Record summary: The record gives the reactivity of an RNA of 177 nucleotides to 2A3 and DMS. The RNA was probed in 150 mM KOAc, 10 mM MgCl2 and 150 mM bicine (pH 8.5) at 24 C. For DMS, 1,488 sequencing reads were counted.
RNA sequence: GGGAACGACUCGAGUAGAGUCGAAAAGUGCUGAUUGAAAUUCAUGGGAGCCUCUCCAUAAUGGAUGAACGCCGCGUUAGUGCGCGCAGUCGCGACGUAAACGCUCUGUCUUCCCGUUCAGGCCUCACGCAUUUACGACUUUCGAGUCGUAAAUGCGAAAAGAAACAACAACAACAAC
Reactivity to 2A3 in 0.01 (KOAc 150mM, MgCl2 10mM, bicine 150mM(pH8.5), 24C), signal-to-noise 1, nucleotides 027 to 126: g050u060g040c050u000g020a180u110u130g020a180a050a070u070u040c060a060u090g040g030g000a050g090c100c040u100c010u000c050c010a060u110a210a070u210g020g010a000u000g010a060a020c030g060c060c000g000c020g040u030u080a110g020u100g130c020g000c010g060c010a000g080u100c020g000c010g060a040c010g020u040a160a000a000c030g000c000u050c030u030g000u000c010u010u020c000c000c000g030u030u090c030a050g070g020c040c030u040c020a040
Reactivity to DMS in 0.01 (KOAc 150mM, MgCl2 10mM, bicine 150mM(pH8.5), 24C), signal-to-noise 2, nucleotides 027 to 126: g030u000g010c020u000g010a140u010u000g010a060a150a070u010u010c100a020u000g000g000g000a030g020c080c120u000c070u020c010c010a130u000a100a040u000g000g000a040u000g010a110a100c040g020c080c020g010c020g020u000u010a120g010u010g020c040g010c050g020c100a110g030u000c020g000c000g000a000c050g000u000a060a070a120c100g010c000u000c020u000g000u010c060u000u000c010c000c020g000u010u010c110a110g020g010c080c050u010c140a160